[RMDB]
RNA sequence: GGGAACGACUCGAGUAGAGUCGAAAACACAAGGGUUUGUGGUGGUCAAUGGCAAAGUUUCUACACUUGUCAAACAAGUGUUAGACUUGCUUAAUAAGGGUAUGCAACUUUUGCAUACAAAGGUCUCAUGACAUCCCGUUCGCGGGAUGUAAAAGAAACAACAACAACAAC
Reactivity to 2A3 in 0.01 (KOAc 150mM, MgCl2 10mM, bicine 150mM(pH8.5), 24C), signal-to-noise 5, nucleotides 027 to 129: c040a000c030a050a070g090g020g040u030u030u020g040u060g000g030u030g000g000u020c030a020a060u070g030g000c020a030a080a010g000u060u040u030c030u020a010c000a000c000u030u080g020u120c060a080a110a120c000a010a040g000u000g000u010u030a020g000a000c000u030u000g000c000u040u110a110a060u110a070a120g140g000g000u000a000u020g000c010a040a030c040u120u160u290u060g000c000a010u000a030c030a010a020a010g060g000u030c010u030c060a070u210g030
Reactivity to DMS in 0.01 (KOAc 150mM, MgCl2 10mM, bicine 150mM(pH8.5), 24C), signal-to-noise 6, nucleotides 027 to 129: c080a040c140a150a090g000g000g000u020u000u030g040u020g040g000u030g060g030u040c090a060a130u050g000g000c040a050a050a080g050u020u020u010c050u050a040c040a000c020u020u020g020u000c260a080a090a200c010a030a020g010u000g000u050u020a060g010a070c030u000u000g030c060u010u050a090a080u000a020a020g030g040g030u010a030u040g010c010a030a130c220u070u050u070u020g000c020a000u010a020c030a040a090a040g000g010u030c050u040c080a000u040g050
Overview: The data come from the RNA Mapping Database (RMDB), library 15KLIB. Structure probing data (2A3 and DMS) for a 170-nucleotide construct. The RNA was probed in 150 mM KOAc, 10 mM MgCl2 and 150 mM bicine (pH 8.5) at 24 C. The 2A3 profile rests on 8,427 reads. DMS adducts were read by reverse transcription with MarathonRT. DMS (dimethyl sulfate) methylates the pairing face of unpaired adenines and cytosines. 2A3 adducts were read by reverse transcription with SuperScript II with manganese. The DMS profile rests on 23,374 reads.